Chemical mapping of a 177-nucleotide RNA with DMS.
The DMS profile rests on 629 reads.
Values cover nucleotides 27 to 126.
It was measured as part of the RMDB library TTRINS.
[RMDB]
RNA sequence: GGGAACGACUCGAGUAGAGUCGAAAAGAUAUGGAGGAACAACGGGAGGCUCACCUCCUGAUGACCAGCUUCGGAAACGAAGCUGCAAGGGAGGAAAUGAGCCGAAGAACGUUGUUCCUCCUAAGUCCACAUCGCCCUACUUCGGUAGGGCGAUGUGAAAAGAAACAACAACAACAAC
Reactivity to DMS in 0.01 (KOAc 150mM, MgCl2 10mM, bicine 150mM(pH8.5), 24C), signal-to-noise 1, nucleotides 027 to 126: g000a060u000a300u020g000g000a010g000g000a020a000c020a020a010c000g040g000g000a150g000g030c000u000c020a070c060c000u030c000c000u000g110a080u000g020a060c300c030a000g030c000u000u010c000g010g000a190a170a300c000g000a080a030g020c000u000g000c010a030a110g010g000g000a040g020g000a020a060a090u010g000a000g000c020c010g000a010a040g000a100a160c010g030u040u040g000u000u000c000c000u000c000c010u000a030a040g000u000c040
The RNA was probed in 150 mM KOAc, 10 mM MgCl2 and 150 mM bicine (pH 8.5) at 24 C.